[RMDB]
RNA sequence: GGGAACGACUCGAGUAGAGUCGAAAAUCGCGUAUGUGGGGGCGGUGAAAGGGUACAGGGUCAUCCUCACCAUGCCGGAGAGCAUGAGCAUCGAACGGAGACGGCUCCUUGCAGCUCUCGGGGCCGACAACGUGUGCAUGUUCGCAUGCACACGUUGAAAAGAAACAACAACAACAAC
Reactivity to DMS in 0.01 (KOAc 150mM, MgCl2 10mM, bicine 150mM(pH8.5), 24C), signal-to-noise 2, nucleotides 027 to 126: u010c030g000c070g020u010a040u000g020u020g020g020g010g000g010c140g020g030u000g010a050a090a060g000g000g010u000a010c140a060g020g000g000u010c120a050u010c050c020u010c060a050c060c010a070u000g000c000c010g000g010a060g010a060g040c040a040u020g000a080g000c070a050u010c090g000a100a040c050g000g010a200g010a160c000g020g000c040u000c000c040u000u010g010c070a180g020c080u000c010u000c060g010g000g030g000c010c110g000a150
Reactivity to 2A3 in 0.01 (KOAc 150mM, MgCl2 10mM, bicine 150mM(pH8.5), 24C), signal-to-noise 2, nucleotides 027 to 126: u030c000g010c010g050u060a090u200g110u120g000g020g010g020g110c050g010g120u070g030a110a040a000g050g000g020u050a020c070a060g000g020g020u110c030a020u080c010c010u010c010a020c030c040a030u100g030c000c020g060g030a080g000a000g040c010a060u050g070a040g080c040a050u060c010g020a050a010c060g060g020a020g040a070c020g000g010c020u000c010c000u010u110g010c060a070g020c040u000c020u030c050g020g000g000g000c030c010g060a020
Chemical mapping of a 177-nucleotide RNA with DMS and 2A3. It was measured as part of the RMDB library OK2TST. The DMS profile rests on 1,677 reads. For 2A3 the reverse transcriptase was SuperScript II with manganese. The RNA was probed in 150 mM KOAc, 10 mM MgCl2 and 150 mM bicine (pH 8.5) at 24 C. Reactivities are given for positions 27 through 126.